[RMDB]
RNA sequence: GGGAACGACUCGAGUAGAGUCGAAAAGAUAUGGACCACUGAAUGCGAUGAACAGCGAAGAACUCGGAAACGAGGGAGCUGUCAUCGCGCGUGGUCCUAAGUCAAAACAGCAUGUUCGCAUGCUGAACUCUUCACAAAGCUUCGGCUUUGUGAAGAGAAAAGAAACAACAACAACAAC
Reactivity to DMS in 0.01 (KOAc 150mM, MgCl2 10mM, bicine 150mM(pH8.5), 24C), signal-to-noise 2, nucleotides 027 to 126: g000a030u000a300u000g000g010a020c000c000a000c010u010g030a040a100u020g010c000g000a020u000g000a100a030c000a010g020c010g030a110a090g020a090a250c020u000c000g010g010a100a130a180c000g010a010g000g000g010a080g000c000u000g010u000c000a000u000c010g010c010g020c010g000u000g000g000u000c000c000u000a000a040g000u000c030a050a040a100a190c020a020g000c000a000u000g000u010u010c200g040c000a000u000g010c010u000g000a020a080
Reactivity to 2A3 in 0.01 (KOAc 150mM, MgCl2 10mM, bicine 150mM(pH8.5), 24C), signal-to-noise 2, nucleotides 027 to 126: g000a010u050a050u180g010g000a000c010c030a030c100u200g170a300a160u300g000c030g000a000u020g040a190a100c010a000g020c020g190a300a020g040a060a070c010u000c020g010g060a050a070a070c010g000a020g010g000g010a010g000c000u000g000u000c000a010u000c000g000c000g000c000g010u000g000g010u000c010c000u000a010a000g040u040c030a010a010a090a180c010a010g030c000a010u030g020u130u170c300g000c150a010u020g010c020u000g010a020a020